RNA sequence: GGGAACGACUCGAGUAGAGUCGAAAAAAAAAAAGAUAUGGAACUGGGCUCCUUGGAUUUAACCAUGUAAGCGUCGGAAACGACGUUGAGUGGUUUGUCAGGAGCUACAGUUCCUAAGUCAAAAAAACUUACAUACAUCGUUCGCGAUGUAUGUAAGAAAAGAAACAACAACAACAAC
Reactivity to DMS in 0.01 (KOAc 150mM, MgCl2 10mM, bicine 150mM(pH8.5), 24C), signal-to-noise 1, nucleotides 027 to 126: a000a000a050a200a130a130a150g000a020u000a300u000g000g000a000a030c000u000g010g000g000c000u000c000c000u010u010g010g020a030u000u000u000a000a010c000c000a000u000g000u030a230a050g000c010g000u000c010g020g020a130a090a120c020g000a030c000g010u000u000g030a200g030u000g000g000u000u000u000g000u000c020a050g000g000a000g010c000u000a010c000a000g000u000u000c000c000u010a000a060g010u010c030a000a000a060a070a040a040a100